[RMDB]
RNA sequence: GGGAACGACUCGAGUAGAGUCGAAAAGUAAUAGAUAACUGGAUGCAGGGUAGGCGUCAACUCAUAUCCAGUACGAAUGGUACCUGUAAAUAAAAUAUGGCGCCUAGUACAAGUACCAACAGAAGGAUAAGCGAUGGUGAUGUCAAUCACAUUUGCACCUCAGGAUUAUAUUCGUAUAAUCCUGAGGAAAAGAAACAACAACAACAAC
Reactivity to 2A3 in 0.01 (KOAc 150mM, MgCl2 10mM, bicine 150mM(pH8.5), 24C), signal-to-noise 6, nucleotides 027 to 156: g040u050a020a150u090a170g110a090u120a140a090c000u010g000g010a010u040g070c180a300g060g000g000u020a010g000g000c010g000u010c010a010a010c010u000c030a040u030a010u150c000c000a000g010u000a010c030g070a150a100u090g000g000u000a010c000c010u010g020u030a020a120a140u110a050a110a100a030u130a060u060g000g000c000g000c000c010u000a020g000u000a000c000a020a000g000u000a010c000c010a010a050c030a030g130a120a030g080g020a060u070a160a070g000c030g020a000u090g080g110u030g010a040u030g130u180c040a070a040u030c010a020c010a040u050u060u200g020c020a040
Reactivity to DMS in 0.01 (KOAc 150mM, MgCl2 10mM, bicine 150mM(pH8.5), 24C), signal-to-noise 3, nucleotides 027 to 156: g030u000a140a090u000a130g020a140u010a120a120c020u000g000g010a040u000g030c100a060g010g020g030u010a050g010g010c050g040u000c010a070a070c050u000c030a090u010a150u000c010c010a050g050u020a110c030g000a110a130u000g000g000u000a010c020c010u030g000u000a060a140a110u000a050a050a120a220u010a100u000g010g020c000g000c030c020u010a080g020u000a060c000a020a040g000u000a010c010c010a030a140c090a090g010a090a060g020g000a180u000a050a160g010c080g020a040u000g020g020u010g020a060u010g020u030c180a060a070u000c060a030c030a110u000u000u000g020c060a120
Chemical mapping of a 207-nucleotide RNA with 2A3 and DMS. 2A3 adducts were read by reverse transcription with SuperScript II with manganese. For 2A3, 4,657 sequencing reads were counted. The RNA was probed in 150 mM KOAc, 10 mM MgCl2 and 150 mM bicine (pH 8.5) at 24 C.